[RMDB]
RNA sequence: GGGAACGACUCGAGUAGAGUCGAAAAGAACUUUGGCCGGCUCGGAAUAGAAUCAGGGGGUGCAAAGUGCCCACUGGCAGAAAGGAUUAUAGCAAAUGCGUACCCUAUUGCAAUACAGCCCGGCCAACAUAGACUACUCUAUUCGUAGAGUAGUCAAGUAAUUGUGGUUAUUCGUAACCACAAUUACAAAAGAAACAACAACAACAAC
Reactivity to DMS in 0.01 (KOAc 150mM, MgCl2 10mM, bicine 150mM(pH8.5), 24C), signal-to-noise 2, nucleotides 027 to 156: g000a120a140c050u020u000u000g000g010c030c010g060g030c010u000c060g010g010a160a120u010a120g010a120a140u000c040a050g030g010g010g050g040u000g010c030a090a040a280g040u010g020c010c010c050a060c050u010g050g000c050a110g020a100a120a070g010g000a100u010u010a100u000a180g010c030a000a060a120u010g050c040g030u000a140c020c010c000u000a080u000u000g020c000a120a100u010a080c040a040g000c080c020c030g040g000c010c010a010a010c110a120u000a130g000a030c010u000a000c000u010c010u000a050u000u000c240g020u000a030g010a030g010u000a010g010u000c000a000a070
Reactivity to 2A3 in 0.01 (KOAc 150mM, MgCl2 10mM, bicine 150mM(pH8.5), 24C), signal-to-noise 5, nucleotides 027 to 156: g010a060a010c020u050u020u020g010g000c000c000g010g000c020u040c080g080g040a080a060u100a130g070a080a080u140c010a050g010g010g000g010g010u030g010c090a190a110a080g040u070g020c010c010c010a020c030u020g020g000c040a030g100a060a110a020g030g020a060u170u090a060u190a170g020c030a020a170a150u200g020c020g020u070a070c010c000c020u080a110u050u110g060c020a030a030u050a140c000a020g040c050c020c010g000g000c000c000a000a000c000a000u040a020g000a000c000u000a000c000u000c000u010a040u050u080c150g070u060a000g000a000g010u010a000g000u000c000a000a000
The record gives the reactivity of an RNA of 207 nucleotides to DMS and 2A3. The RNA was probed in 150 mM KOAc, 10 mM MgCl2 and 150 mM bicine (pH 8.5) at 24 C. The 2A3 profile rests on 4,316 reads. 2A3 adducts were read by reverse transcription with SuperScript II with manganese. DMS adducts were read by reverse transcription with MarathonRT.